[RMDB]
RNA sequence: GGGAACGACUCGAGUAGAGUCGAAAACGCGCAGGUAUGGAUACGAAUUGGCGCUUAUUGACUCCCAUAGACUGAUUCAUAGUUACGUCAAUGUUCGAGCGUCAGUAGUCAUAUCUAUGGGAGCGCGGCAGUGGUUACAAUUCGUUGUAACCACUGCAAAAGAAACAACAACAACAAC
Reactivity to 2A3 in 0.01 (KOAc 150mM, MgCl2 10mM, bicine 150mM(pH8.5), 24C), signal-to-noise 2, nucleotides 027 to 126: c020g010c010g000c030a010g110g000u050a020u060g020g010a030u040a050c020g030a010a080u090u040g040g000c010g010c000u040u050a100u030u110g010a070c010u000c010c020c010a010u000a000g010a000c020u000g020a030u050u070c020a010u100a150g070u120u100a040c010g010u020c010a110a120u170g060u170u180c060g050a030g020c020g020u010c010a020g010u090a020g010u030c000a000u040a010u050c000u000a000u000g000g010g050a020g000c020g000c000g130
Reactivity to DMS in 0.01 (KOAc 150mM, MgCl2 10mM, bicine 150mM(pH8.5), 24C), signal-to-noise 3, nucleotides 027 to 126: c120g000c020g010c000a060g020g020u010a040u030g010g000a010u020a010c060g010a050a110u000u010g010g000c010g020c030u000u010a030u000u000g000a130c020u010c020c020c000a060u010a070g010a030c260u010g010a070u020u000c110a110u010a070g010u000u020a050c070g010u000c050a060a110u020g020u000u000c160g010a110g020c000g010u000c020a080g000u000a030g010u000c010a040u000a180u000c000u000a040u000g010g000g010a070g020c000g040c140g020
The record gives the reactivity of an RNA of 177 nucleotides to 2A3 and DMS.
For 2A3 the reverse transcriptase was SuperScript II with manganese.
Values cover nucleotides 27 to 126.
It was measured as part of the RMDB library OK2TRN.
For DMS, 2,146 sequencing reads were counted.
Reactivities are rounded to 0.1 and cut off at 0 and 3.